[RMDB]
RNA sequence: GGGAACGACUCGAGUAGAGUCGAAAAUGGGUCACCUCAUAACUUGGAAAUUCCACCAGAAUUGGAGACAUUCAGUGGCAGGGGAGAUAUUAUGAGAGUCUGUUACCCCUACUUUCAGGUAGUUCAACAACGAUAGUCUGUUCGCAGACUAUCGUUGAAAAGAAACAACAACAACAAC
Reactivity to 2A3 in 0.01 (KOAc 150mM, MgCl2 10mM, bicine 150mM(pH8.5), 24C), signal-to-noise 2, nucleotides 027 to 126: u100g000g020g000u050c030a040c010c000u020c020a090u070a120a040c020u040u080g060g070a030a080a130u130u050c010c000a030c000c010a150g090a050a070u110u110g060g010a050g040a070c030a030u040u050c010a020g040u030g010g030c040a020g000g000g120g000a080g030a030u120a030u080u110a040u100g040a040g000a000g040u040c040u130g090u090u160a270c000c000c000c000u010a020c030u080u260u140c020a020g120g000u020a020g020u070u100c020a080a080
Reactivity to DMS in 0.01 (KOAc 150mM, MgCl2 10mM, bicine 150mM(pH8.5), 24C), signal-to-noise 3, nucleotides 027 to 126: u010g000g020g000u000c070a080c110c030u010c050a040u010a040a060c120u000u010g010g000a110a070a120u010u010c030c020a090c040c030a120g010a050a050u000u010g010g000a110g000a100c120a080u000u000c020a110g000u000g000g000c130a080g000g010g000g000a160g000a100u000a080u010u000a020u000g000a210g000a080g000u000c010u010g010u000u000a160c000c010c010c030u000a010c030u000u010u010c200a070g010g000u010a030g010u010u000c100a110a180

The record gives the reactivity of an RNA of 177 nucleotides to 2A3 and DMS. The reactions ran in a buffer of 150 mM KOAc, 10 mM MgCl2 and 150 mM bicine (pH 8.5), at 24 C. 2A3 is a SHAPE reagent: it acylates the 2'-hydroxyl of flexible nucleotides of all four kinds. Reactivities are given for positions 27 through 126. DMS adducts were read by reverse transcription with MarathonRT. For 2A3 the reverse transcriptase was SuperScript II with manganese. Source: RMDB library OK2TRN, as collected in RNAgym.